RNA sequence: GGGAACGACUCGAGUAGAGUCGAAAAUUAACGAAAUUCGCGCCCCCGUACUUUUGGGUCAGACAGGGCGCGACCAGUGGGUAUCAUAACGCACAUCGACAUGGAUUAUGGGCGCACACACUGAAACUCGCACCCGUCAUCGACAGGCUGGCAGAUACCAUAUGUGCCUUUUCGAAGGCACAUAUGGAAAAGAAACAACAACAACAAC
Reactivity to 2A3 in 0.01 (KOAc 150mM, MgCl2 10mM, bicine 150mM(pH8.5), 24C), signal-to-noise 3, nucleotides 027 to 156: u110u050a100a030c070g030a040a050a130u100u040c010g000c010g010c010c000c000c000c010g030u080a120c080u100u140u170u240g170g000g020u080c030a000g020a070c060a060g020g000g000c000g000c000g000a000c000c000a020g020u020g010g040g030u090a060u230c040a130u060a150a030c040g040c030a040c000a060u130c150g070a080c090a160u170g050g010a060u060u050a050u050g030g000g000c050g020c050a040c000a000c000a010c080u060g050a100a080a020c080u060c040g000c000a040c000c000c000g040u070c020a090u060c050g030a010c000a020g050g020c020u020g020g010c010a000g020a060u080a070
Reactivity to DMS in 0.01 (KOAc 150mM, MgCl2 10mM, bicine 150mM(pH8.5), 24C), signal-to-noise 1, nucleotides 027 to 156: u000u000a030a220c060g040a060a070a170u000u010c040g000c010g000c030c000c010c010c020g020u010a060c040u000u010u000u000g020g000g060u010c100a150g000a140c010a100g000g000g030c020g010c010g010a000c230c030a040g010u000g000g000g050u010a300u000c050a100u010a080a080c050g010c040a110c050a060u000c030g020a080c060a070u030g010g010a160u000u000a070u010g000g030g000c020g040c040a100c050a100c030a080c070u000g000a130a070a090c080u000c070g030c000a050c000c000c010g010u000c050a040u000c070g040a060c070a060g000g000c010u020g000g000c010a090g000a090u020a110
Conditions: 150 mM KOAc, 10 mM MgCl2 and 150 mM bicine (pH 8.5), 24 C. The record gives the reactivity of an RNA of 207 nucleotides to 2A3 and DMS. Values cover nucleotides 27 to 156. DMS adducts were read by reverse transcription with MarathonRT. The DMS profile rests on 1,586 reads. For 2A3 the reverse transcriptase was SuperScript II with manganese. For 2A3, 1,297 sequencing reads were counted.